Chemical mapping of a 177-nucleotide RNA with 2A3 and DMS.
The DMS profile rests on 1,481 reads.
Source: RMDB library OK2TRN, as collected in RNAgym.
Conditions: 150 mM KOAc, 10 mM MgCl2 and 150 mM bicine (pH 8.5), 24 C.
RNA sequence: GGGAACGACUCGAGUAGAGUCGAAAAGCUGGAGGUGGGCAUGCUGGCUCAGCUGUAGCAAGCACGUGGGACUCUUUUCCUAGUGGGAUAGGAAGAAGCGCUUCAAGGAAGACAAUCAAGCCCAAAACGCCUAUUAAUUGUUCGCAAUUAAUAGGCGAAAAGAAACAACAACAACAAC
Reactivity to 2A3 in 0.01 (KOAc 150mM, MgCl2 10mM, bicine 150mM(pH8.5), 24C), signal-to-noise 2, nucleotides 027 to 126: g070c070u080g040g080a070g070g120u090g050g010g020c040a030u080g010c020u050g080g000c010u000c050a110g050c090u130g040u210a010g030c030a050a010g000c020a010c050g040u060g020g000g050a080c030u060c010u070u090u010u040c000c000u010a030g030u050g070g090g000a080u020a060g040g020a040a040g040a040a030g030c070g010c120u060u040c040a010a030g100g030a030a030g040a030c010a010a060u110c060a070a030g060c000c000c000a040a060a010a020
Reactivity to DMS in 0.01 (KOAc 150mM, MgCl2 10mM, bicine 150mM(pH8.5), 24C), signal-to-noise 2, nucleotides 027 to 126: g010c040u000g000g000a160g010g000u010g000g000g010c050a090u000g010c040u000g020g000c040u020c030a160g000c120u020g000u000a040g000c040a070a050g010c030a080c120g000u000g010g010g000a170c070u000c090u000u000u010u010c000c020u000a050g010u000g000g010g010a220u000a020g020g000a030a020g010a070a060g020c160g020c060u000u010c080a080a080g000g000a060a130g000a090c120a050a070u000c090a040a120g020c000c000c030a060a040a110a180